[RMDB]
RNA sequence: GGGAACGACUCGAGUAGAGUCGAAAAGUGUGCUACAUCACAAGGCCACCCAUGGCCUAGUGUUACCCAAGGGCAAGGCCAGGCAUGUCCCUCCAUCAGACUACAGGCUCGUUUGGGAGGGAACGAAGUGGGGGAAAGGUUUCGACCUUUCCCCCACAAAAGAAACAACAACAACAAC
Reactivity to DMS in 0.01 (KOAc 150mM, MgCl2 10mM, bicine 150mM(pH8.5), 24C), signal-to-noise 1, nucleotides 027 to 126: g020u020g020u000g010c070u000a080c100a080u000c060a010c070a160a040g050g020c000c050a070c120c040c130a060u000g000g040c020c000u000a030g000u010g000u000u000a120c060c070c000a080a110g000g000g020c030a060a060g010g010c040c060a090g000g000c040a070u000g010u020c000c000c000u000c010c010a200u010c040a060g000a020c030u010a100c120a130g010g000c080u000c140g000u000u030u010g020g010g010a040g010g000g000a020a020c100g010a070a130
Reactivity to 2A3 in 0.01 (KOAc 150mM, MgCl2 10mM, bicine 150mM(pH8.5), 24C), signal-to-noise 1, nucleotides 027 to 126: g120u100g030u110g090c010u090a020c010a050u160c030a010c010a040a020g050g040c010c000a040c000c010c090a250u160g020g030c000c020u010a020g020u000g000u040u110a060c000c050c040a090a130g080g000g040c130a170a090g110g030c010c020a040g050g000c050a050u120g050u000c020c000c080u000c000c030a150u210c000a030g020a020c010u130a100c080a150g080g150c010u020c060g050u040u000u040g030g000g010a010g010g000g000a030a020c020g060a150a080